[RMDB]
RNA sequence: GGGAACGACUCGAGUAGAGUCGAAAAUUGACAUAGGAAGAACGAGAUUACAACAAGAUUUAGAUGAUUUAAGAGAAAAAGCAUUAAAGAAAGAAGCUCUUUCACCAGAUAAAAUGAUAGAAUUACUUAUGCGGUACCAAGAUUCUGUGUCUCCGGCGAUGUAAUAACAGUUCGCUGUUAUUACAUCAAAAGAAACAACAACAACAAC
Reactivity to 2A3 in 0.01 (KOAc 150mM, MgCl2 10mM, bicine 150mM(pH8.5), 24C), signal-to-noise 2, nucleotides 027 to 156: u060u040g010a010c030a060u110a000g020g010a010a080g040a050a000c040g040a050g020a150u160u220a050c040a090a000c020a050a080g040a070u020u110u130a080g040a090u090g000a010u080u080u190a130a030g060a000g090a040a070a030a050a000g060c040a030u180u230a110a090a000g050a060a120a020g000a060a010g010c010u020c000u030u030u040c050a050c020c000a030g010a120u120a080a110a020a010u070g070a010u040a110g090a080a090u070u020a040c010u030u080a000u140g080c020g020g010u020a020c010c000a040a000g040a060u100u070c070u100g060u040g020u020c030u020c040c000g020g000c060
Reactivity to DMS in 0.01 (KOAc 150mM, MgCl2 10mM, bicine 150mM(pH8.5), 24C), signal-to-noise 1, nucleotides 027 to 156: u000u000g020a090c060a030u000a050g020g000a140a150g020a050a080c030g040a180g020a170u000u000a080c060a170a140c050a040a130g010a190u000u000u000a140g020a130u000g020a080u000u000u000a040a080g030a170g000a060a050a050a050a050g000c020a040u000u000a070a060a110g040a090a160a210g000a110a100g030c030u020c060u040u000u000c030a150c020c030a120g010a100u000a070a010a130a070u000g000a120u010a110g000a060a160u000u000a060c000u010u000a080u000g000c020g020g020u010a070c040c020a040a180g040a160u000u010c040u000g050u030g020u000c030u000c010c040g030g020c300